[RMDB]
RNA sequence: GGGAACGACUCGAGUAGAGUCGAAAAGAUAUGGAAGUGGACCGACAUGCUCGACGUCGGAAACGACGUUAGAGCAACAGCGGUUACUUCCUAAGUCAAAAGCAUCUCUGGUUCGCCAGAGAUGCAACUAUUUCAUCACCUUCGGGUGAUGAAAUAGAAAAGAAACAACAACAACAAC
Reactivity to 2A3 in 0.01 (KOAc 150mM, MgCl2 10mM, bicine 150mM(pH8.5), 24C), signal-to-noise 2, nucleotides 027 to 126: g020a010u020a020u080g000g020a000a000g010u090g080g120a010c020c010g030a070c140a250u300g000c010u000c000g000a000c000g010u000c000g030g000a010a020a020c000g010a010c000g050u010u080a290g020a010g020c000a020a020c030a000g000c000g010g000u000u010a000c000u010u000c000c000u000a020a020g000u020c030a090a000a000a220g000c000a010u000c000u000c000u010g030g090u070u100c300g070c090c000a010g000a010g000a000u010g020c000a000a000
Reactivity to DMS in 0.01 (KOAc 150mM, MgCl2 10mM, bicine 150mM(pH8.5), 24C), signal-to-noise 2, nucleotides 027 to 126: g000a020u000a050u000g000g010a020a000g010u000g020g030a000c010c000g000a060c100a190u000g030c000u000c010g010a010c000g010u000c020g020g010a010a030a040c000g000a020c000g000u010u000a050g020a010g020c000a060a060c210a140g000c000g000g000u000u000a020c010u000u000c000c010u000a000a040g000u000c020a150a110a180a120g010c000a010u000c000u000c000u000g000g010u010u010c300g000c010c020a030g040a010g000a000u000g010c000a010a060
Notes:
An RNA of 177 nucleotides, treated with 2A3 and DMS and read out base by base. The RNA was probed in 150 mM KOAc, 10 mM MgCl2 and 150 mM bicine (pH 8.5) at 24 C. The DMS profile rests on 2,607 reads. Source: RMDB library TTRDES, as collected in RNAgym.